[RMDB]
RNA sequence: GGGAACGACUCGAGUAGAGUCGAAAAACGAGUCCGUGCGCGGACUCGAAGGGCCCCAGAAGACCAAGGGGCCCAAACCUACCACUCAUUAGAUGCAUGGAAAUCACUAGGUGAUACGUCACCUAGAACACGCUUUUAAGCUUCGGCUUAAAAGCAAUCUUAUUCGAUGCUUCGGCAUCGAAUAAGAAAAAGAAACAACAACAACAAC
Reactivity to 2A3 in 0.01 (KOAc 150mM, MgCl2 10mM, bicine 150mM(pH8.5), 24C), signal-to-noise 1, nucleotides 027 to 156: a000c000g000a000g000u000c000c000g020u070g020c210g020c010g030g000a000c000u030c000g000a040a000g030g000g000c000c000c000c000a150g060a300a010g100a040c060c100a110a150g000g020g010g000c000c000c010a000a000a010c000c000u060a020c000c030a080c070u110c040a050u090u240a060g070a140u110g110c110a100u120g050g150a100a100a080u140c130a050c090u020a030g000g020u000g030a010u040a040c150g050u010c000a000c000c000u000a000g000a020a020c020a000c040g000c000u000u000u000u000a000a000g000c010u000u140c210g040g000c000u000u030a000a000a000a000g000c000a000a010

Structure probing data (2A3) for a 207-nucleotide construct.
Source: RMDB library M2RFPK, as collected in RNAgym.
Values cover nucleotides 27 to 156.
For 2A3, 407 sequencing reads were counted.